An RNA of 177 nucleotides, treated with DMS and 2A3 and read out base by base. The data come from the RNA Mapping Database (RMDB), library M2PK90. The reactions ran in a buffer of 150 mM KOAc, 10 mM MgCl2 and 150 mM bicine (pH 8.5), at 24 C. The 2A3 profile rests on 1,092 reads.
RNA sequence: GGGAACGACUCGAGUAGAGUCGAAAAUUUAAGAGCGUAGAUGUCUCUGUCACGAUACGAGUUAGUGACUCUCGUGUACUACUGACGAAUGAGACAGAGACAUUUAUGCUCAGUGUCAGUCAAGGAACACGCUAUUUUGGUUCGCCAAAAUAGCGUGAAAAGAAACAACAACAACAAC
Reactivity to DMS in 0.01 (KOAc 150mM, MgCl2 10mM, bicine 150mM(pH8.5), 24C), signal-to-noise 2, nucleotides 027 to 126: u010u010u000a060a140g020a010g020c000g030u000a000g000a020u000g020u000c000u000c010u000g010u010c000a110c140g020a130u020a040c080g010a140g000u010u010a060g000u000g000a070c030u000c240u000c210g010u010g010u010a080c030u000a060c040u000g020a060c000g000a150a050u000g000a070g010a030c000a020g000a000g000a020c010a000u000u000u000a000u000g020c000u010c020a010g010u010g000u000c060a090g000u000c080a080a050g000g000a130a190
Reactivity to 2A3 in 0.01 (KOAc 150mM, MgCl2 10mM, bicine 150mM(pH8.5), 24C), signal-to-noise 1, nucleotides 027 to 126: u140u090u030a150a040g010a000g000c010g000u000a000g000a020u000g010u000c000u000c000u000g000u020c010a010c070g050a070u130a200c010g000a010g030u030u100a020g030u050g170a080c000u010c000u000c120g240u190g020u100a070c040u020a000c010u030g100a040c040g060a150a060u110g030a030g000a050c000a000g000a020g010a000c000a000u000u020u000a020u010g020c020u020c000a000g000u020g040u050c010a030g020u040c060a050a050g110g000a110a010